[RMDB]
RNA sequence: GGGAACGACUCGAGUAGAGUCGAAAAGAUAUGGAAACUCUCCAGUAAGUCUAUGAAGCGUGAUCGGAAACGAUCACGUGGAGACUUCUGGAGGAGUUUCCUAAGUCAAAGGGUGGUUCGCCACCCACGGUAGAGAAGGGUUCGCCCUUCUCUACCGAAAAGAAACAACAACAACAAC
Reactivity to DMS in 0.01 (KOAc 150mM, MgCl2 10mM, bicine 150mM(pH8.5), 24C), signal-to-noise 2, nucleotides 027 to 126: g010a060u000a300u000g010g000a040a010a010c020u000c010u010c000c020a020g000u000a010a010g010u000c000u000a280u010g010a150a170g000c000g010u010g000a000u010c000g030g000a120a130a240c000g010a010u000c010a020c000g000u000g020g020a020g010a010c000u000u000c010u000g000g000a030g020g000a010g000u010u000u010c000c020u000a040a100g000u010c030a120a150a090g000g010g000u000g000g020u000u030c300g030c030c000a030c010c000c010a000
Reactivity to 2A3 in 0.01 (KOAc 150mM, MgCl2 10mM, bicine 150mM(pH8.5), 24C), signal-to-noise 1, nucleotides 027 to 126: g020a030u090a010u160g010g010a000a000a000c000u010c000u000c040c010a040g110u300a040a010g010u000c000u020a300u180g030a040a000g000c000g010u000g030a020u010c000g010g050a080a040a070c030g000a000u000c000a010c000g000u000g000g000a000g000a010c000u010u000c000u000g000g000a030g000g010a000g010u010u020u010c000c020u010a000a000g060u000c060a080a000a120g020g000g000u010g030g010u100u170c270g140c060c010a010c000c000c000a000